The data come from the RNA Mapping Database (RMDB), library TTRDES.
This 177-nucleotide RNA was probed chemically with 2A3 and DMS.
For 2A3 the reverse transcriptase was SuperScript II with manganese.
RNA sequence: GGGAACGACUCGAGUAGAGUCGAAAAAAAAGAUAUGGAUGUGCGGGAGGGAUGCACACGAUGAGGCAGAUCGGAAACGAUCUGCCGAGUGUUCCCAUCCCGAAGAACGCACAUCCUAAGUCAAAAACUUUCCUUAUAGCUUCGGCUAUAAGGAAAGAAAAGAAACAACAACAACAAC
Reactivity to 2A3 in 0.01 (KOAc 150mM, MgCl2 10mM, bicine 150mM(pH8.5), 24C), signal-to-noise 1, nucleotides 027 to 126: a000a000a010a040g080a070u100a040u170g000g010a020u000g000u010g000c000g000g010g050a030g030g000g000a050u020g110c260a010c000a000c080g300a300u260g070a240g060g000c000a000g000a000u020c000g090g030a050a060a030c000g000a000u030c000u000g010c000c030g020a000g010u000g010u020u050c000c040c000a000u010c000c000c000g050a000a060g020a030a010c000g000c000a000c000a000u050c000c000u000a020a010g030u010c070a040a060a080a140a180
Reactivity to DMS in 0.01 (KOAc 150mM, MgCl2 10mM, bicine 150mM(pH8.5), 24C), signal-to-noise 2, nucleotides 027 to 126: a090a030a070a060g000a060u000a300u000g000g000a010u010g000u000g000c020g020g020g030a080g040g010g020a010u000g020c200a000c000a040c020g000a190u010g090a280g000g000c020a020g000a020u000c010g000g000a090a120a220c020g010a000u000c000u010g010c010c000g010a010g000u000g010u000u020c060c180c010a010u000c010c000c010g000a020a040g000a110a210c030g010c000a020c010a010u000c010c010u000a010a050g000u020c050a040a110a060a060a090
For DMS the reverse transcriptase was MarathonRT.